This 177-nucleotide RNA was probed chemically with DMS and 2A3. Conditions: 150 mM KOAc, 10 mM MgCl2 and 150 mM bicine (pH 8.5), 24 C. The data come from the RNA Mapping Database (RMDB), library OK2TST.
[RMDB]
RNA sequence: GGGAACGACUCGAGUAGAGUCGAAAAUCACGAUAAAUCAGAUUGUAGUGAUCCUGCAUACUGACAAACUGCGCCCAGCCGUGCUGUUUUUGGAGUUCCAGUGCCUGAGCAAACUGCGAAGCGUGCACGUUGACAACCAGUUCGCUGGUUGUCAACGAAAAGAAACAACAACAACAAC
Reactivity to DMS in 0.01 (KOAc 150mM, MgCl2 10mM, bicine 150mM(pH8.5), 24C), signal-to-noise 2, nucleotides 027 to 126: u010c030a070c070g010a090u010a040a160a180u000c090a030g020a300u000u000g020u020a040g000u000g010a150u000c060c000u000g000c020a050u000a230c020u010g010a020c070a120a140a080c070u000g000c060g020c060c040c000a120g000c080c040g030u000g000c060u000g000u000u050u000u000u030g010g000a160g000u000u020c040c050a050g020u010g000c050c010u010g000a130g010c030a120a070a080c110u010g000c040g000a080a100g000c130g020u020g010c060a070
Reactivity to 2A3 in 0.01 (KOAc 150mM, MgCl2 10mM, bicine 150mM(pH8.5), 24C), signal-to-noise 1, nucleotides 027 to 126: u020c020a000c040g060a050u100a160a080a030u100c050a020g160a190u020u050g060u010a030g030u020g070a080u000c010c000u000g000c000a020u120a170c010u050g020a000c030a090a070a030c030u040g020c000g020c050c000c000a020g070c000c020g060u060g000c060u000g140u070u000u020u100u060g110g010a060g000u080u130c010c000a060g080u050g080c030c010u060g000a030g040c000a040a040a040c030u080g020c000g040a140a030g080c050g100u120g000c010a010